The record gives the reactivity of an RNA of 207 nucleotides to 2A3 and DMS.
The RNA was probed in 150 mM KOAc, 10 mM MgCl2 and 150 mM bicine (pH 8.5) at 24 C.
RNA sequence: GGGAACGACUCGAGUAGAGUCGAAAAUGUACAGUACUUAUACAAUAGGUAUAUAAGUUCUAUGAAUGUGAUAGACGUAUUAAAAUGCACCGACUAAGAACGUAGAACGAACUAUAGAAUGUUAUACAAUGGGUGAUGAUAAGUAGAAGAUGUUACCCUCCCUUAAGGCAUUCGUGCCUUAAGGGAGAAAAGAAACAACAACAACAAC
Reactivity to 2A3 in 0.01 (KOAc 150mM, MgCl2 10mM, bicine 150mM(pH8.5), 24C), signal-to-noise 3, nucleotides 027 to 156: u110g000u020a030c000a050g030u010a020c000u030u050a010u020a040c040a120a100u060a180g110g000u000a040u020a010u000a150a050g010u040u010c010u000a030u030g060a170a020u190g060u010g060a020u070a100g020a030c010g010u010a080u100u190a150a050a080a060u190g020c040a060c050c020g090a030c050u080a140a000g030a150a050c030g020u010a020g010a050a010c010g000a030a020c030u010a030u020a100g070a060a040u080g010u050u060a040u000a060c080a070a110u070g100g010g010u030g070a020u060g010a000u030a160a000g070u040a010g000a040a000g010a020u080g050u010u050a030c020c000
Reactivity to DMS in 0.01 (KOAc 150mM, MgCl2 10mM, bicine 150mM(pH8.5), 24C), signal-to-noise 2, nucleotides 027 to 156: u000g020u000a050c080a120g020u000a030c030u010u000a120u010a060c020a130a130u000a110g000g000u000a060u030a050u000a040a140g010u000u000c040u000a070u000g000a050a140u000g040u000g030a110u000a050g000a040c030g000u000a050u010u000a070a090a030a240u000g000c060a050c000c020g000a110c060u000a040a110g010a130a210c040g030u020a040g010a050a110c030g020a030a090c050u000a080u000a070g010a110a060u000g030u000u000a060u010a080c040a090a080u000g000g000g010u000g020a060u000g040a080u000a030a140g020u010a110g020a100a100g000a110u000g010u000u000a100c040c040
2A3 adducts were read by reverse transcription with SuperScript II with manganese.